[RMDB]
RNA sequence: GGGAACGACUCGAGUAGAGUCGAAAAGAUAUGGACUAUGACAUGUGCUCUGAUCGGAAACGAUCAACGUGAGCACAACAGCAUAGGUCCUAAGUCAAAGGACCACUCUCUUCGGAGAGUGGUCCAAUCUAGCUAGCAAGUUCGCUUGCUAGCUAGAAAAAGAAACAACAACAACAAC
Reactivity to DMS in 0.01 (KOAc 150mM, MgCl2 10mM, bicine 150mM(pH8.5), 24C), signal-to-noise 2, nucleotides 027 to 126: g000a030u000a300u020g000g000a180c010u000a020u000g000a030c070a220u020g000u000g030c000u000c010u000g020a000u010c000g040g010a100a070a180c000g010a020u000c010a040a060c300g000u030g000a000g000c010a010c000a010a030c200a150g000c000a020u000a000g030g010u000c000c010u000a070a090g020u000c030a090a080a170g000g020a000c000c000a010c000u000c000u000c000u000u020c190g050g000a000g000a030g040u010g000g000u000c000c000a010a000
Description: This 177-nucleotide RNA was probed chemically with DMS. Reactivities are given for positions 27 through 126.